[RMDB]
RNA sequence: GGGAACGACUCGAGUAGAGUCGAAAAUUGGGAAUCUGCAGCUUCUUUGCUGCCUCGGCCUCCGGAGGCACAGGCCUCCAACACAGGAGCAAUAGAAGUGCUUCUGCCCACAUAGGGAGUGGUUCAUAGACACUGAGCAUGCAGUCAGAUUGGGAAGUGCCUUGCUCCUCUUCGGAGGAGCAAGGCAAAAAGAAACAACAACAACAAC
Reactivity to 2A3 in 0.01 (KOAc 150mM, MgCl2 10mM, bicine 150mM(pH8.5), 24C), signal-to-noise 1, nucleotides 027 to 156: u050u040g010g010g000a090a040u060c070u170g010c010a000g090c010u060u040c010u040u190u100g000c010u100g100c000c020u010c090g050g000c020c060u080c050c090g030g040a020g000g030c000a110c070a230g280g060c010c040u000c000c050a020a040c110a000c010a000g030g000a030g030c000a000a040u060a270g070a160a020g070u020g030c030u030u020c040u020g070c000c050c000a060c020a050u190a070g000g050g000a010g000u050g010g020u100u060c040a090u090a080g010a050c040a010c090u050g000a010g060c060a020u060g000c020a000g010u090c050a020g080a170u070u150g020g000g040a080a080g090